[RMDB]
RNA sequence: GGGAACGACUCGAGUAGAGUCGAAAAAUCUGCGUAUUUGGCCUGCUUCGCGCCUUCGGCCUGCUUCGAGUAGACGGACCUGCCGUCGGGGACGUGCUUGGCCAGAUCCGCCACGGGGUCCUCGGGGCAGGCGUGGUGUAUUCGUACACCACGCCUGAAAAGAAACAACAACAACAAC
Reactivity to 2A3 in 0.01 (KOAc 150mM, MgCl2 10mM, bicine 150mM(pH8.5), 24C), signal-to-noise 2, nucleotides 027 to 126: a000u100c110u220g060c040g020u080a130u070u070u150g060g020c010c050u100g030c080u110u130c090g000c000g070c000c000u010u000c000g030g020c000c000u000g000c020u030u130c020g050a050g010u080a030g090a050c010g030g000a030c000c000u010g000c020c020g140u130c020g020g020g000g000a040c060g180u160g090c140u100u050g020g000c000c030a090g040a270u080c070c060g040c040c010a020c040g050g010g000g010u020c000c000u000c010g000g000g000g000
Reactivity to DMS in 0.01 (KOAc 150mM, MgCl2 10mM, bicine 150mM(pH8.5), 24C), signal-to-noise 2, nucleotides 027 to 126: a080u000c080u000g010c090g000u000a060u010u010u010g010g010c030c050u000g010c140u000u000c070g020c050g000c090c130u000u010c020g020g010c010c020u000g010c020u000u000c020g040a040g010u000a070g030a300c060g010g000a160c040c030u000g010c000c020g020u010c040g020g000g000g000a050c020g010u000g000c090u000u000g000g020c010c040a150g000a100u020c180c190g020c030c050a020c080g020g010g000g020u000c010c020u010c000g000g000g000g000
Background:
Structure probing data (2A3 and DMS) for a 177-nucleotide construct. The data come from the RNA Mapping Database (RMDB), library OK2TRN. For 2A3 the reverse transcriptase was SuperScript II with manganese.